[RMDB]
RNA sequence: GGGAACGACUCGAGUAGAGUCGAAAAUGGCGGUGCAGCUCAACUAUUGCGAGCGCACGAUCAAGAACAUCGUUCAUGACAUAGUGACGCGGCUGAAGCUCCGCAACCGCACGCAUGCCGUCGCACAUAGGACGGCGAGAUUCGUCUCGCCGUCCUAAAAAGAAACAACAACAACAAC
Reactivity to DMS in 0.01 (KOAc 150mM, MgCl2 10mM, bicine 150mM(pH8.5), 24C), signal-to-noise 1, nucleotides 027 to 126: u000g000g000c060g000g060u010g000c100a080g040c000u000c060a000a100c160u040a090u030u000g010c160g000a130g000c020g000c020a040c070g000a110u040c050a030a090g020a030a070c010a010u000c060g000u000u020c020a110u040g030a070c220a060u040a270g010u000g000a150c080g000c020g010g050c090u000g060a050a080g000c060u010c140c130g050c010a010a060c080c040g000c000a100c060g000c070a100u060g000c060c010g010u040c040g010c040a030c300a190
Reactivity to 2A3 in 0.01 (KOAc 150mM, MgCl2 10mM, bicine 150mM(pH8.5), 24C), signal-to-noise 2, nucleotides 027 to 126: u190g000g010c030g030g050u000g030c020a000g000c070u100c000a080a130c050u160a160u230u140g060c090g020a000g000c060g000c030a000c000g030a080u050c050a060a090g060a050a060c010a110u130c230g030u060u010c020a040u180g160a110c030a030u130a040g020u000g100a100c000g000c000g050g000c000u020g200a190a040g090c000u030c000c000g050c000a050a000c000c000g000c060a020c030g080c000a000u100g010c010c000g000u010c030g120c040a210c000a060
Notes
Chemical mapping of a 177-nucleotide RNA with DMS and 2A3. For 2A3, 664 sequencing reads were counted. The data come from the RNA Mapping Database (RMDB), library OK1LIB. The DMS profile rests on 1,163 reads. For 2A3 the reverse transcriptase was SuperScript II with manganese. Conditions: 150 mM KOAc, 10 mM MgCl2 and 150 mM bicine (pH 8.5), 24 C.